[RMDB]
RNA sequence: GGGAACGACUCGAGUAGAGUCGAAAACACACGUAGUCUUCGGACACGUCAAUCAUCUCCUGAUCAUUGUCUCGAUCCACAUGACACCGGACCAGACGGUCCAGCGCCGUGUGCAUCUCUUCGCGCGACUCCGCGUACCGAUUGCCGAGAAUGUCGCGGGGCCAGACAGUUUCGACUGUCUGGCCCCAAAAGAAACAACAACAACAAC
Reactivity to 2A3 in 0.01 (KOAc 150mM, MgCl2 10mM, bicine 150mM(pH8.5), 24C), signal-to-noise 1, nucleotides 027 to 156: c050a000c000a000c040g060u060a050g000u000c000u090u070c230g060g000a010c010a020c050g000u000c000a000a080u070c010a030u040c050u000c040c040u040g040a050u000c010a080u010u070g010u020c020u010c070g040a030u040c000c030a060c000a050u050g010a010c010a040c040c030g030g000a010c000c000a040g000a010c030g010g010u000c000c000a000g000c000g030c040c040g070u060g010u110g000c010a020u000c020u010c000u030u060c070g000c000g010c010g070a070c030u090c060c020g000c020g010u010a060c000c050g030a050u000u070g010c000c020g030a030g020a000a030u070g000u000c040g000c010